The data come from the RNA Mapping Database (RMDB), library OK1LIB. This 177-nucleotide RNA was probed chemically with DMS and 2A3. Reactivities are given for positions 27 through 126. The RNA was probed in 150 mM KOAc, 10 mM MgCl2 and 150 mM bicine (pH 8.5) at 24 C. 2A3 adducts were read by reverse transcription with SuperScript II with manganese.

[RMDB]
RNA sequence: GGGAACGACUCGAGUAGAGUCGAAAAGUUUAUAUAAAAGAGCCAAUUACAGAUUUAUCACUCGAAAAUAUUCAAGUGCAUUUGAAGUCAUUAGAUGCUGAUAAUGAGGAUAUCCCGUUCAGUGGAGAUUGAAGCAUGUGUUCGCACAUGCUUCAAUAAAAGAAACAACAACAACAAC
Reactivity to DMS in 0.01 (KOAc 150mM, MgCl2 10mM, bicine 150mM(pH8.5), 24C), signal-to-noise 2, nucleotides 027 to 126: g010u020u000u040a050u010a270u030a100a070a090a120g000a070g020c010c070a040a040u030u010a160c090a100g010a200u010u000u010a030u010c000a020c000u010c010g040a130a090a100a060u010a120u000u000c000a030a010g020u020g020c150a110u050u000u000g000a060a030g010u010c140a050u020u020a060g010a060u010g010c160u010g000a040u000a000a020u000g020a180g020g000a120u000a040u020c000c010c020g000u010u030c140a110g020u020g000g000a070g010
Reactivity to 2A3 in 0.01 (KOAc 150mM, MgCl2 10mM, bicine 150mM(pH8.5), 24C), signal-to-noise 2, nucleotides 027 to 126: g010u030u270u000a150u000a090u080a140a080a110a000g180a030g000c010c010a010a010u080u080a190c030a040g120a000u130u050u000a030u010c000a000c020u000c000g010a010a030a110a060u300a200u130u070c100a020a020g030u090g300c000a040u000u000u130g030a050a040g030u010c010a020u030u140a070g030a070u130g010c090u020g030a050u000a040a000u110g000a010g010g060a010u030a070u080c000c000c060g000u180u060c080a080g000u060g210g040a090g000